Background:
An RNA of 177 nucleotides, treated with 2A3 and DMS and read out base by base. For DMS the reverse transcriptase was MarathonRT. The RNA was probed in 150 mM KOAc, 10 mM MgCl2 and 150 mM bicine (pH 8.5) at 24 C. For 2A3 the reverse transcriptase was SuperScript II with manganese.

[RMDB]
RNA sequence: GGGAACGACUCGAGUAGAGUCGAAAAGAUAUGGACCCAGUGAGCUAGGAACUACUCGGAAACGAGUAUUUCCUUGGACCUCACGGGUCCUAAGUCAAACUUAGUACCCCUUCGGGGGUACUAAGAACAUCUCUCGAUAGUUCGCUAUCGAGAGAUGAAAAGAAACAACAACAACAAC
Reactivity to 2A3 in 0.01 (KOAc 150mM, MgCl2 10mM, bicine 150mM(pH8.5), 24C), signal-to-noise 2, nucleotides 027 to 126: g030a020u030a020u120g010g000a010c000c040c280a080g020u000g000a010g030c170u220a060g020g030a000a010c010u000a000c000u010c020g030g030a060a060a040c020g010a020g000u000a000u000u000u010c000c020u000u100g050g100a060c030c010u000c000a010c000g000g010g000u000c000c000u000a040a000g000u020c040a010a020a100c000u000u000a010g000u010a010c070c000c000c010u000u140c300g130g010g000g000g000u020a000c000u000a000a000g000a000a010
Reactivity to DMS in 0.01 (KOAc 150mM, MgCl2 10mM, bicine 150mM(pH8.5), 24C), signal-to-noise 2, nucleotides 027 to 126: g010a010u000a300u000g000g000a010c000c000c040a170g080u000g000a020g010c070u000a030g020g000a010a010c090u000a010c000u000c000g010g000a080a070a170c000g000a020g000u000a010u000u000u000c000c010u000u020g040g020a130c300c000u000c020a020c010g000g010g000u000c000c000u000a000a060g000u010c010a130a140a300c000u000u000a000g000u000a010c000c000c000c000u000u020c300g030g000g000g000g010u000a000c010u000a000a000g000a130a240